[RMDB]
RNA sequence: GGGAACGACUCGAGUAGAGUCGAAAACACUUCAACAUAUGUUGCAGUACUAUGAUGUAUCUAUCUACUGCUUUAGGUGACGUCCCUAGCUUCGCAAGACUUCACGACCUGUAUAACAGACCUAUAAGACCACGAGCGAAUUCGUUCGCUCGUGGUCAAAAGAAACAACAACAACAAC
Reactivity to 2A3 in 0.01 (KOAc 150mM, MgCl2 10mM, bicine 150mM(pH8.5), 24C), signal-to-noise 2, nucleotides 027 to 126: c030a000c060u070u150c010a010a010c000a060u250a170u300g050u130u030g000c000a010g030u000a170c080u140a230u100g040a050u140g170u140a250u180c020u000a000u020c020u030a120c020u020g150c010u110u040u050a020g000g030u030g000a040c060g020u040c040c000c000u000a030g000c000u000u080c030g020c020a040a110g000a040c100u030u020c080a050c000g020a040c010c000u040g000u060a030u060a220a010c070a030g000a150c000c000u290a180u000a300a010